[RMDB]
RNA sequence: GGGAACGACUCGAGUAGAGUCGAAAAGCCAUGAGUCGCAACGCAAAGCGGCGGCAAGUGGAGUUAGCGAGAAGAGACUAGGCUUUGGUUUCUUCAAGUGAAGCGGUCACCAAUCAGGUGUGGUAGUAGGAGCCUGCAUGGUUCGCCAUGCAGGCAACCCCUAUACCGAGUUCGCUCGGUAUAGGGGAAAAGAAACAACAACAACAAC
Reactivity to 2A3 in 0.01 (KOAc 150mM, MgCl2 10mM, bicine 150mM(pH8.5), 24C), signal-to-noise 1, nucleotides 027 to 156: g030c010c010a020u020g030a050g010u000c000g010c000a110a130c050g100c110a220a290a080g050c020g040g020c050g020g030c000a070a030g000u040g030g020a030g010u090u060a030g020c040g020a020g010a010a010g010a000g000a020c000u030a050g060g210c070u170u170u120g000g000u000u020u010c000u000u000c000a090a010g000u010g050a070a010g040c040g050g020u070c020a030c040c010a020a070u140c070a100g000g030u020g030u010g060g000u070a170g040u020a040g070g060a030g020c060c000u000g020c000a020u000g000g060u000u040c020g070c050c000a000u000g000c010a000g010g000c000a000a000
Reactivity to DMS in 0.01 (KOAc 150mM, MgCl2 10mM, bicine 150mM(pH8.5), 24C), signal-to-noise 1, nucleotides 027 to 156: g020c000c010a020u000g010a300g000u000c040g000c030a120a060c030g030c000a100a140a200g040c090g000g070c010g030g000c030a040a300g010u000g000g000a040g030u000u000a230g010c030g050a300g000a040a030g000a190g000a030c020u000a090g030g070c260u000u000u010g010g020u000u000u010c000u010u020c070a110a300g010u040g030a070a120g050c030g050g000u000c030a090c040c020a070a110u010c120a070g000g010u000g000u030g000g070u000a040g010u000a100g020g010a190g000c000c000u000g000c010a000u000g030g010u000u000c300g040c000c000a000u000g000c000a030g040g000c000a020a000